Chemical mapping of a 207-nucleotide RNA with DMS and 2A3.
For DMS the reverse transcriptase was MarathonRT.
The RNA was probed in 150 mM KOAc, 10 mM MgCl2 and 150 mM bicine (pH 8.5) at 24 C.
For 2A3 the reverse transcriptase was SuperScript II with manganese.
RNA sequence: GGGAACGACUCGAGUAGAGUCGAAAACGGGGAAUUAGGGUUCGAUUCCGGAGAGGGAGCCUGAGAAACGGCUACCACAUCUAAGGAAGGCAGCAGGCGCGCAAAUUACCCAAUCCUGAUUCAGGGAGGUAGUGACAAGAAAUAACAACACUGGAAACAAAUAUCUAACCUUCGGGUUAGAUAUUUGAAAAGAAACAACAACAACAAC
Reactivity to DMS in 0.01 (KOAc 150mM, MgCl2 10mM, bicine 150mM(pH8.5), 24C), signal-to-noise 1, nucleotides 027 to 156: c020g010g010g080g010a090a110u000u020a100g000g010g010u020u000c060g000a210u010u010c010c020g020g000a180g000a190g010g010g000a020g000c000c000u030g000a250g000a080a080a110c140g000g020c020u010a040c010c020a080c040a060u010c050u000a080a150g000g010a070a100g000g010c000a040g020c260a040g030g000c050g000c020g000c070a030a030a050u000u000a050c050c010c010a030a110u020c040c020u010g000a180u000u000c030a100g030g100g020a040g010g020u000a040g030u010g010a140c040a040a070g040a040a080a080u010a040a050c040a030a080c010a030c040u010g020g000a090a060a170
Reactivity to 2A3 in 0.01 (KOAc 150mM, MgCl2 10mM, bicine 150mM(pH8.5), 24C), signal-to-noise 2, nucleotides 027 to 156: c020g010g010g000g040a050a050u100u060a090g030g020g030u040u070c020g050a110u050u050c020c010g010g030a050g000a030g000g000g010a000g010c000c010u030g010a010g030a060a160a010c080g010g000c000u100a200c010c010a090c020a070u060c030u030a030a030g000g000a000a020g030g020c010a010g000c000a010g050g000c000g000c000g000c070a050a040a120u120u060a070c000c010c000a010a020u050c010c000u080g050a220u160u140c010a020g000g020g010a020g020g000u040a020g000u020g020a020c030a050a030g070a100a120a060u230a070a020c040a050a020c030a040c080u080g070g030a060a120a010

The data come from the RNA Mapping Database (RMDB), library PDB130. Values cover nucleotides 27 to 156.